[RMDB]
RNA sequence: GGGAACGACUCGAGUAGAGUCGAAAAAGAAUCUCCUUCGGGAGAUUCUGAACCACUAAGCUGAUUGCGGAUGACGACGAGGCAGCUCGUGUCGACCAACCACCGAGAACAGGUUCGCCUGUUCUAACAUCAACAGGAAGUUCGCUUCCUGUUGAUGAAAAGAAACAACAACAACAAC
Reactivity to 2A3 in 0.01 (KOAc 150mM, MgCl2 10mM, bicine 150mM(pH8.5), 24C), signal-to-noise 5, nucleotides 027 to 126: a000g010a000a000u000c000u020c010c010u010u060c150g090g000g000a010g000a000u010u000c000u000g000a010a020c010c010a010c100u100a070a040g070c040u050g140a200u100u210g070c050g040g040a100u100g040a040c110g020a010c000g010a050g010g120c070a090g050c020u000c010g020u020g020u020c020g040a100c000c010a030a030c030c030a060c030c080g120a020g000a040a000c010a010g010g050u030u050c150g030c030c000u000g000u010u000c000u000a000a010
Reactivity to DMS in 0.01 (KOAc 150mM, MgCl2 10mM, bicine 150mM(pH8.5), 24C), signal-to-noise 5, nucleotides 027 to 126: a010g010a020a010u000c000u000c000c010u000u010c190g030g010g020a010g010a010u000u010c000u000g010a090a210c030c010a120c170u000a090a100g020c080u000g000a060u000u000g000c100g010g000a140u010g000a070c040g010a030c020g000a090g000g010c220a120g000c000u010c010g020u000g000u000c010g000a110c040c030a050a090c050c050a050c130c080g000a030g010a010a010c010a010g000g000u000u010c220g020c000c000u000g000u000u000c000u000a040a150
This 177-nucleotide RNA was probed chemically with 2A3 and DMS. For DMS, 5,528 sequencing reads were counted. For 2A3, 6,463 sequencing reads were counted.